Structure probing data (DMS and 2A3) for a 177-nucleotide construct. The reactions ran in a buffer of 150 mM KOAc, 10 mM MgCl2 and 150 mM bicine (pH 8.5), at 24 C. The DMS profile rests on 6,756 reads. For DMS the reverse transcriptase was MarathonRT.
RNA sequence: GGGAACGACUCGAGUAGAGUCGAAAAUGUGCCAGGGCAGCUGGUGGGUUGUCACGUCCACAAUGGUGCCAUCGUUGUCCACUGGAAUUUGCUGUCAGGUGCCAAAUCGUGAUCAGCGUUUGCCCGGGAGCAUUCAUUAGUUCGCUAAUGAAUGCUCAAAAGAAACAACAACAACAAC
Reactivity to DMS in 0.01 (KOAc 150mM, MgCl2 10mM, bicine 150mM(pH8.5), 24C), signal-to-noise 3, nucleotides 027 to 126: u040g020u070g010c030c030a070g000g000g030c010a070g010c020u010g010g010u000g010g040g010u010u000g010u030c090a030c080g030u040c080c060a080c230a060a090u000g010g010u000g000c000c010a060u000c040g000u000u000g010u030c010c030a090c070u020g000g020a070a090u020u030u000g000c020u010g010u000c040a090g000g010u000g000c110c090a010a080a070u020c020g010u000g010a060u010c050a020g020c010g000u010u020u030g020c010c000c010g020g000
Reactivity to 2A3 in 0.01 (KOAc 150mM, MgCl2 10mM, bicine 150mM(pH8.5), 24C), signal-to-noise 6, nucleotides 027 to 126: u280g040u130g090c020c020a040g020g000g020c010a010g000c020u110g020g030u070g040g020g000u070u130g080u120c040a020c040g050u060c050c000a090c050a130a140u170g050g000u020g020c000c000a040u040c050g070u040u090g050u040c030c030a080c150u010g000g050a050a090u120u070u170g030c020u020g030u050c040a040g030g000u030g010c030c010a100a130a020u080c030g050u060g040a060u110c050a020g040c030g040u090u140u110g020c000c000c000g010g060